[RMDB]
RNA sequence: GGGAACGACUCGAGUAGAGUCGAAAAUCCGGCGAACGAGCCCGAAGAGCGAGUGGGGGAGAACUCCCGAGAGUUGGGAGACAGAAAGAGGGCGAGUGAUCUCGGAAGGAAUCCCCCAAGCUGCCAACUACGUGAAGCUUCGGCUUCACGAAAAGAAACAACAACAACAAC
Reactivity to 2A3 in 0.01 (KOAc 150mM, MgCl2 10mM, bicine 150mM(pH8.5), 24C), signal-to-noise 5, nucleotides 027 to 129: u030c020c000g000g000c010g010a080a070c020g010a020g080c000c020c030g090a100a050g070a000g030c030g030a050g100u140g000g000g000g010g000a030g000a030a020c000u000c000c010c000g000a000g000a010g040u080u070g010g030g000a070g000a040c010a030g170a010a110a010g070a080g040g030g010c040g010a020g000u130g030a060u000c000u010c000g020g010a000a000g010g010a070a050u010c000c000c020c000c000a000a000g000c030u040g010c020c010a040a080c050u200a070
Reactivity to DMS in 0.01 (KOAc 150mM, MgCl2 10mM, bicine 150mM(pH8.5), 24C), signal-to-noise 5, nucleotides 027 to 129: u020c010c000g000g010c030g000a000a000c170g000a130g020c000c000c000g030a130a080g000a080g010c040g020a120g050u020g020g000g000g080g030a060g010a180a180c050u000c020c000c020g040a030g030a050g040u010u090g010g010g050a060g030a110c070a110g000a030a050a130g040a030g000g000g000c000g010a070g050u060g020a020u000c040u020c030g040g000a060a020g020g010a070a190u020c020c000c010c000c010a040a080g020c060u030g060c020c040a060a130c080u050a140
This 170-nucleotide RNA was probed chemically with 2A3 and DMS. The reactions ran in a buffer of 150 mM KOAc, 10 mM MgCl2 and 150 mM bicine (pH 8.5), at 24 C. Source: RMDB library 15KLIB, as collected in RNAgym. The 2A3 profile rests on 8,615 reads.